[RMDB]
RNA sequence: GGGAACGACUCGAGUAGAGUCGAAAAUCUGGGCUUGGGUCUCCUCCCAGGUCCGGAAUCAGUCUCCAUGGCUUCCAUCCUGGGCCUCUUCUUCGGGGGCCCUCCCUCUUCGUUCCUCUUCUUUGAUAUAGGACGCAGUUCGCUGCGUCCAAAAGAAACAACAACAACAAC
Reactivity to 2A3 in 0.01 (KOAc 150mM, MgCl2 10mM, bicine 150mM(pH8.5), 24C), signal-to-noise 5, nucleotides 027 to 129: u010c010u010g000g020g000c000u000u000g000g000g020u070c050u060c150c020u120c000c000c000a000g000g010u010c000c000g000g010a010a030u070c010a020g030u030c030u010c070c030a070u060g030g000c000u040u040c020c010a090u010c010c030u060g000g010g000c020c000u010c010u170u030c020u080u150c100g010g000g000g010g000c010c000c000u010c000c000c000u030c020u050u040c000g040u030u020c000c000u000c020u150u030c000u050u130u100g090a080u040a030u060a230
Reactivity to DMS in 0.01 (KOAc 150mM, MgCl2 10mM, bicine 150mM(pH8.5), 24C), signal-to-noise 3, nucleotides 027 to 129: u040c010u010g000g000g000c020u020u000g030g000g040u030c230u080c240c170u040c000c000c000a010g020g020u020c030c030g060g000a040a040u080c220a160g010u010c000u000c070c060a180u090g000g020c030u060u000c060c070a260u040c060c080u060g000g030g040c120c000u010c120u050u020c130u000u080c090g060g020g040g030g010c030c020c090u070c060c020c000u000c040u000u000c040g000u000u000c010c020u030c150u030u070c010u030u020u050g040a120u050a080u030a160